[RMDB]
RNA sequence: GGGAACGACUCGAGUAGAGUCGAAAAUUGAAGGUAAAACAGCCUGUGGGUGAAACACACCCACAGGGCCCAAUGGGCGCUAGCACUUUGGUAUCACGGUACCUUUGUGCGCCUGUUUUACCGAAGGUGGCGCCUUUCUUCGGAAAGGCGAAAAGAAACAACAACAACAAC
Reactivity to 2A3 in 0.01 (KOAc 150mM, MgCl2 10mM, bicine 150mM(pH8.5), 24C), signal-to-noise 7, nucleotides 027 to 129: u100u100g070a090a000g010g000u010a000a000a000a000c000a000g020c000c000u000g010u000g000g000g000u010g030a060a090a010c150a020c000a000c050c000c010a000c000a000g000g000g000c000c000c000a050a090u300g000g000g000c010g010c060u100a050g000c010a010c000u000u000u030g000g000u010a000u010c040a030c220g140g010u000a000c000c000u000u000u010g000u000g000c010g000c000c000u000g000u000u000u000u000a000c000c000g000a010a000g080g020u070g030g020
Reactivity to DMS in 0.01 (KOAc 150mM, MgCl2 10mM, bicine 150mM(pH8.5), 24C), signal-to-noise 7, nucleotides 027 to 129: u020u010g020a180a120g000g000u000a010a010a020a020c020a000g000c050c030u010g050u010g000g000g000u030g000a110a100a090c300a190c030a020c020c000c000a000c000a030g000g000g000c000c000c000a100a120u060g050g030g020c000g010c000u000a110g020c010a030c000u010u060u020g000g030u020a010u020c050a080c270g020g000u000a030c000c000u000u040u010g020u010g000c020g010c030c000u000g010u070u020u010u010a010c010c000g000a040a030g030g010u040g020g010